[RMDB]
RNA sequence: GGGAACGACUCGAGUAGAGUCGAAAAGAUAUGGACCACGAAUCCCUUGGAUUUAUAUAGAAGUUACAACUGUAUCGGAAACGAUACAGUUGUAACCCUAUAUUGUCAGGGAUAGUGGUCCUAAGUCGCGUAUUCAAUAGUUCGCUAUUGAAUACGCAAAAGAAACAACAACAACAAC
Reactivity to 2A3 in 0.01 (KOAc 150mM, MgCl2 10mM, bicine 150mM(pH8.5), 24C), signal-to-noise 1, nucleotides 027 to 126: g080a010u170a110u270g030g020a010c000c000a000c020g050a130a300u010c000c020c000u020u140g210g040a130u300u300u020a010u000a010u020a020g030a100a050g020u010u000a000c000a000a000c000u000g010u000a000u000c030g010g000a170a100a050c000g000a000u000a000c010a000g000u000u000g020u000a000a000c000c010c000u000a000u000a000u010u000g010u030c000a000g000g000g000a000u000a000g000u000g010g010u000c000c010u000a000a000g010u000c100
Reactivity to DMS in 0.01 (KOAc 150mM, MgCl2 10mM, bicine 150mM(pH8.5), 24C), signal-to-noise 1, nucleotides 027 to 126: g020a090u020a300u000g000g020a020c000c000a010c000g000a230a260u000c010c000c040u000u010g010g010a030u010u020u000a000u010a010u000a000g000a170a300g000u000u000a000c010a020a000c000u000g020u000a000u020c000g000g000a130a090a270c000g020a030u000a010c000a000g020u000u000g020u000a000a000c000c050c000u000a000u000a010u000u000g000u000c000a020g000g000g030a000u000a040g030u000g010g000u000c010c010u010a000a110g000u000c110